[RMDB]
RNA sequence: GGGAACGACUCGAGUAGAGUCGAAAAUGCCAGAGGGUAAAAUCUACUCAACGGCUGUAGAAAAUCUAGUUUUUGCAUCUUUAAAUGUUAAAGGGGGAGACUUGGGCGGCUUGUUUGCUGAUUUUACUAGACCAAGAGUAUUCGUACUCUUGGUCUAAAAAGAAACAACAACAACAAC
Reactivity to DMS in 0.01 (KOAc 150mM, MgCl2 10mM, bicine 150mM(pH8.5), 24C), signal-to-noise 2, nucleotides 027 to 126: u010g010c000c010a070g000a300g000g000g020u000a010a070a120a080u000c130u000a040c020u010c050a050a210c150g010g000c020u000g000u000a000g000a130a100a160a080u020c060u000a060g000u000u000u000u000u000g010c060a040u000c050u030u000u010a030a110a070u010g010u000u000a060a050a080g010g040g010g000g000a090g000a070c080u000u000g000g000g000c030g020g000c050u000u020g000u000u000u010g020c040u010g000a100u000u000u000u000a120c130